[RMDB]
RNA sequence: GGGAACGACUCGAGUAGAGUCGAAAAGAAGUCCGACACGCUGUCGCGGGGCGAUUUAGCACCUUUCCCGGGAAAGGACCCGGCGCGAUUUAGGCACAUUUAUUAGAUCAGUGCCGAUCUAAAGAAAGAUCGUAAUGGAGUUCGCUCCAUUACGAUCAAAAGAAACAACAACAACAAC
Reactivity to DMS in 0.01 (KOAc 150mM, MgCl2 10mM, bicine 150mM(pH8.5), 24C), signal-to-noise 2, nucleotides 027 to 126: g010a110a210g010u010c040c010g000a140c160a050c190g000c060u000g030u000c030g010c030g000g010g010g010c000g030a120u000u000u000a100g030c110a200c060c070u000u000u010c100c000c040g010g000g000a110a090a100g010g000a110c010c020c000g000g000c040g020c060g020a010u000u000u000a150g000g000c020a070c090a080u000u010u020a140u030u000a120g000a030u000c060a090g040u000g000c110c050g000a020u010c090u010a020a070a170g000a100a080a060
Reactivity to 2A3 in 0.01 (KOAc 150mM, MgCl2 10mM, bicine 150mM(pH8.5), 24C), signal-to-noise 2, nucleotides 027 to 126: g030a060a040g090u010c010c010g000a040c020a010c070g050c030u050g000u020c030g000c010g000g020g000g000c010g010a010u100u080u250a050g010c040a220c000c000u010u140u060c000c000c000g050g010g000a090a070a040g160g030a020c000c030c000g000g020c000g000c020g000a010u120u010u140a040g010g130c010a020c010a060u120u230u250a160u100u100a070g030a060u030c080a020g020u020g160c000c030g010a020u030c010u050a080a050a010g150a020a080a040